[RMDB]
RNA sequence: GGGAACGACUCGAGUAGAGUCGAAAAUACGUGACCUUCGGGUCACGUAACCGGCGUUCCCAAGUCAAAAAGAGAGACGCAAUCUCGACAGCGGCCUUUUGGUAUGAGUUGCUUUCGAGCAACUCAACAAAACUAGUGUAUUCGUACACUAGUUUUGAAAAGAAACAACAACAACAAC
Reactivity to 2A3 in 0.01 (KOAc 150mM, MgCl2 10mM, bicine 150mM(pH8.5), 24C), signal-to-noise 7, nucleotides 027 to 126: u040a000c000g000u000g000a000c010c000u010u030c260g050g000g010u000c000a000c000g000u000a000a000c020c020g060g030c020g010u010u000c010c010c000a000a020g130u100c060a030a030a030a100a040g080a010g010a000g010a040c030g000c050a050a090u040c040u040c080g060a070c040a020g020c010g020g020c000c020u070u090u080u150g090g010u180a110u150g000a000g000u000u000g000c000u030u050u120c140g020a000g010c000a000a000c000u000c010a000a010
Reactivity to DMS in 0.01 (KOAc 150mM, MgCl2 10mM, bicine 150mM(pH8.5), 24C), signal-to-noise 9, nucleotides 027 to 126: u000a000c000g020u000g000a010c000c000u000u010c210g040g020g020u000c000a000c010g010u000a010a080c060c030g000g010c050g010u000u000c000c000c000a160a110g000u010c110a050a060a060a070a050g010a130g000a060g000a070c040g010c090a090a130u000c040u000c040g000a080c160a090g010c030g000g000c050c020u000u000u010u000g010g010u010a100u000g000a010g000u000u000g000c000u000u000u010c160g000a020g010c000a000a010c000u000c000a030a130
Structure probing data (2A3 and DMS) for a 177-nucleotide construct. Values cover nucleotides 27 to 126. The reactions ran in a buffer of 150 mM KOAc, 10 mM MgCl2 and 150 mM bicine (pH 8.5), at 24 C. High 2A3 reactivity points to a flexible backbone, as in loops and unpaired stretches.